[RMDB]
RNA sequence: GGGAACGACUCGAGUAGAGUCGAAAACUGCUCUCGUUCGCGAGAGCAGAAAUAAUAAACGCAAGAAAACGAUCAAAACUAGCGAAAUACAUAACGAUCGAAAAAGAAGUCACUUCGGUGACUUCAACGACAUAACGUUGUUCGCAACGUUAUGUCGAAAAGAAACAACAACAACAAC
Reactivity to DMS in 0.01 (KOAc 150mM, MgCl2 10mM, bicine 150mM(pH8.5), 24C), signal-to-noise 1, nucleotides 027 to 126: c000u000g010c000u000c000u010c000g000u000u030c210g010c050g000a020g010a020g100c000a000g000a010a000a050u000a100a170u000a020a060a170c070g030c140a070a030g030a050a040a100a090c010g020a010u010c100a100a040a100a080c080u000a110g000c010g010a110a030a070u000a040c120a080u020a060a160c090g000a030u000c040g030a060a100a060a140a050g000a000a020g010u000c000a000c000u000u030c120g040g020u000g030a020c000u000u000c020a050a110
Reactivity to 2A3 in 0.01 (KOAc 150mM, MgCl2 10mM, bicine 150mM(pH8.5), 24C), signal-to-noise 2, nucleotides 027 to 126: c000u000g000c000u000c000u000c000g020u020u060c130g060c010g170a000g000a000g040c000a010g000a000a000a000u020a010a010u030a010a160a040c030g000c060a070a030g070a130a090a000a040c010g000a000u010c010a030a080a030a130c050u050a010g030c060g120a040a060a070u160a040c060a060u090a130a060c060g010a020u030c000g000a010a000a010a000a060g020a000a000g000u010c010a000c050u040u140c220g080g000u020g010a000c000u000u020c000a000a000